[RMDB]
The record gives the reactivity of an RNA of 207 nucleotides to DMS and 2A3. For 2A3 the reverse transcriptase was SuperScript II with manganese. It was measured as part of the RMDB library M2RFPK.
RNA sequence: GGGAACGACUCGAGUAGAGUCGAAAAGAAUGAGCAGCACACAGCGACGAAGAUCCGGGCUGGAUUCUAGAGCACGGUCGCCCCAGCGCGGCCCGGGAAGUCAGUGGCAAGACCGCCUGAGCAGCAACAGAGUCGCCCAGGUUCGCCUGGGCGACAAGAUAAUAGUCUAGUUCGCUAGACUAUUAUCAAAAGAAACAACAACAACAAC
Reactivity to DMS in 0.01 (KOAc 150mM, MgCl2 10mM, bicine 150mM(pH8.5), 24C), signal-to-noise 1, nucleotides 027 to 156: g020a060a100u000g000a070g010c030a080g020c020a150c040a080c030a100g010c080g010a140c020g020a060a100g040a160u000c010c010g060g020g000c000u020g030g000a120u000u000c040u000a150g000a100g000c010a030c120g030g000u000c060g010c020c020c010c140a140g040c010g000c050g020g010c000c000c020g010g020g010a040a040g020u000c020a090g010u010g020g000c020a060a080g030a120c060c000g000c020c030u000g040a070g000c010a050g000c020a040a170c090a140g000a140g070u010c050g060c000c000c000a080g010g050u000u010c190g040c010c020u020g040g010g040c000g000a000c010a000a050
Reactivity to 2A3 in 0.01 (KOAc 150mM, MgCl2 10mM, bicine 150mM(pH8.5), 24C), signal-to-noise 2, nucleotides 027 to 156: g100a010a080u100g000a020g010c030a000g060c020a030c000a000c000a120g040c020g080a020c030g080a100a030g010a040u020c020c010g000g070g010c050u030g030g040a070u080u000c030u120a070g010a020g090c070a030c090g040g010u050c020g000c000c020c000c030a070g060c030g000c010g010g020c030c000c010g010g000g010a070a020g020u040c040a010g000u030g030g020c020a020a030g030a040c000c010g010c030c010u030g000a010g000c020a000g000c000a010a070c010a070g060a010g090u020c000g000c000c000c020a020g020g000u050u100c150g040c080c000u000g000g040g000c000g000a000c000a000a000
For DMS the reverse transcriptase was MarathonRT.